[RMDB]
RNA sequence: GGGAACGACUCGAGUAGAGUCGAAAAGCUUGGGGAGAGAUGAUAGCCAUGGGUGACUGGGAGUCACCUUCUGAAAGCAACUGUAAUCCUCUUGGGAAAGGACUGAACAGUGACCUGCCAGAGUCCAGCUCAGUGAGGUGGCAGUAUCACUGUGCCAGUAUAAUGCGUGAUUCGUCACGCAUUAUACAAAAGAAACAACAACAACAAC
Reactivity to 2A3 in 0.01 (KOAc 150mM, MgCl2 10mM, bicine 150mM(pH8.5), 24C), signal-to-noise 5, nucleotides 027 to 156: g040c050u070u040g000g010g020g000a040g010a010g010a070u070g030a050u110a040g030c030c030a060u050g020g000g000u030g010a020c020u080g050g130g030a060g020u010c010a020c010c000u050u070c060u040g100a130a070a010g020c020a030a050c040u060g040u130a040a090u020c010c000u020c020u060u080g030g000g010a020a080a040g040g010a050c040u080g050a120a010c010a010g000u000g020a020c010c000u000g000c000c000a040g020a020g090u010c020c040a050g030c040u070c080a100g040u080g180a040g010g080u030g010g000c010a000g000u040a040u100c000a000c000u010g010u000g060c020c010a000
Reactivity to DMS in 0.01 (KOAc 150mM, MgCl2 10mM, bicine 150mM(pH8.5), 24C), signal-to-noise 2, nucleotides 027 to 156: g030c080u010u000g030g020g000g010a090g020a110g010a120u010g030a100u020a130g060c050c060a120u000g020g010g020u000g030a050c000u000g010g020g010a160g030u010c000a020c010c000u000u000c040u000g020a080a130a090g000c040a060a080c030u010g000u000a090a140u010c010c010u010c040u000u000g000g000g010a090a100a070g030g010a120c050u000g020a160a050c010a020g010u000g050a030c210c020u030g010c040c010a150g000a110g020u000c060c090a150g020c120u000c080a070g010u000g000a110g020g000u010g050g000c000a010g000u010a070u000c030a000c020u000g030u000g010c020c060a160